[RMDB]
RNA sequence: GGGAACGACUCGAGUAGAGUCGAAAAAAGGACUGGUUCGCCAGUCCUUAUUCAUUCCUACGCAACGAAGCGUAAGUCAUUACGCAAAUGACUAAAAGCGUAUACGAAAGGACUUCGGUCCUUUCAACUAGCUUAGAAGAUUCGUCUUCUAAGCUAGAAAAGAAACAACAACAACAAC
Reactivity to DMS in 0.01 (KOAc 150mM, MgCl2 10mM, bicine 150mM(pH8.5), 24C), signal-to-noise 9, nucleotides 027 to 126: a030a010g000g000a010c000u000g000g010u000u010c230g030c010c000a000g010u000c000c000u000u000a010u010u000c210a300u000u000c000c000u000a020c030g010c010a080a050c070g010a100a070g010c030g010u000a080a040g000u000c080a030u000u000a050c280g020c180a070a040a030u000g000a030c050u000a090a050a080a120g000c010g010u000a120u010a110c180g000a010a000a010g010g010a020c000u000u010c180g030g000u000c000c000u000u000u000c000a090a160
Reactivity to 2A3 in 0.01 (KOAc 150mM, MgCl2 10mM, bicine 150mM(pH8.5), 24C), signal-to-noise 9, nucleotides 027 to 126: a000a000g000g000a010c010u010g000g020u040u060c100g030c050c000a000g000u000c000c000u000u000a000u000u010c000a000u000u000c000c000u010a010c010g000c020a070a100c060g110a100a050g040c010g010u020a040a000g040u040c030a070u020u050a050c060g010c130a050a070a100u060g030a030c030u080a030a030a020a050g040c010g020u060a040u040a130c100g010a010a000a000g010g000a000c000u040u090c250g060g000u000c000c000u000u000u000c000a000a000